[RMDB]
RNA sequence: GGGAACGACUCGAGUAGAGUCGAAAAGCAGUUGGCGCCGGCCCCUCCUUCACUGCCGAUGUCGCAAGCUUGUCAGCUUCGCCCUGCUGGCGGGGGUGGGUGGGUGCCACAAUGCCGGCGGCGUAAAAUUACCUACCGUGUUCGCACGGUAGGUAAUAAAAGAAACAACAACAACAAC
Reactivity to DMS in 0.01 (KOAc 150mM, MgCl2 10mM, bicine 150mM(pH8.5), 24C), signal-to-noise 2, nucleotides 027 to 126: g000c070a050g030u000u010g000g000c040g000c180c060g000g050c020c000c020c020u000c000c010u010u020c030a060c030u000g060c010c000g000a110u010g010u020c160g030c060a040a050g050c000u000u070g020u040c230a050g010c000u000u020c150g020c060c070c050u000g010c100u040g000g010c040g000g000g000g000g000u020g000g000g030u000g060g010g020u030g000c010c020a000c140a050a060u050g000c010c030g010g000c020g000g000c040g010u020a030a040a060
Reactivity to 2A3 in 0.01 (KOAc 150mM, MgCl2 10mM, bicine 150mM(pH8.5), 24C), signal-to-noise 5, nucleotides 027 to 126: g030c060a020g010u050u030g030g000c010g030c040c040g040g030c010c000c010c010u040c010c000u110u100c080a070c090u050g010c010c020g030a010u060g070u140c040g030c080a020a000g020c010u220u150g200u300c110a000g000c020u030u050c040g040c050c030c000u080g020c020u030g010g010c010g010g010g020g000g020u140g020g000g020u090g020g020g100u090g000c000c000a000c010a000a030u100g000c000c000g010g010c000g000g010c070g060u090a050a080a070
The record gives the reactivity of an RNA of 177 nucleotides to DMS and 2A3.
Conditions: 150 mM KOAc, 10 mM MgCl2 and 150 mM bicine (pH 8.5), 24 C.
For DMS the reverse transcriptase was MarathonRT.
High DMS reactivity at an A or C suggests that its Watson-Crick edge is free.
It was measured as part of the RMDB library OK1LIB.
Values cover nucleotides 27 to 126.